Structure probing data (2A3 and DMS) for a 177-nucleotide construct. 2A3 is a SHAPE reagent: it acylates the 2'-hydroxyl of flexible nucleotides of all four kinds. Conditions: 150 mM KOAc, 10 mM MgCl2 and 150 mM bicine (pH 8.5), 24 C. For 2A3, 3,023 sequencing reads were counted. 2A3 adducts were read by reverse transcription with SuperScript II with manganese.
RNA sequence: GGGAACGACUCGAGUAGAGUCGAAAAACGCAGACAGAACAACAACAAGACAGACAAUUGUGGAAAAUACAAUGGACGCAGACACCGUGAUCGCUGGAUUGGCCAUGGUGAUGCUAAUUCUGCUGGCCGCAGCAUGAAUGUUCGCAUUCAUGCUGCGAAAAGAAACAACAACAACAAC
Reactivity to 2A3 in 0.01 (KOAc 150mM, MgCl2 10mM, bicine 150mM(pH8.5), 24C), signal-to-noise 4, nucleotides 027 to 126: a000c110g000c020a020g060a090c000a030g090a120a030c060a020a000c020a120a000c040a070a120g120a130c050a040g120a020c080a210a140u020u010g010u070g100g040a180a010a010a000u190a010c000a020a050u020g050g010a030c060g020c010a010g110a090c000a010c010c020g030u050g010a050u240c060g000c020u070g060g200a290u100u300g030g020c000c000a010u010g030g000u020g020a010u010g020c030u040a000a090u020u000c000u000g000c020u010g090g020c040
Reactivity to DMS in 0.01 (KOAc 150mM, MgCl2 10mM, bicine 150mM(pH8.5), 24C), signal-to-noise 2, nucleotides 027 to 126: a160c160g000c090a040g070a160c120a060g040a140a020c120a110a150c100a060a050c110a040a070g000a130c110a130g000a140c250a070a040u000u000g000u000g000g000a130a090a080a090u000a060c010a040a000u000g010g020a060c060g020c000a000g000a230c000a080c000c000g030u000g000a060u080c020g000c050u000g000g050a090u030u060g020g040c000c030a000u000g000g000u070g000a230u030g000c000u000a090a250u000u010c010u000g060c000u040g020g000c110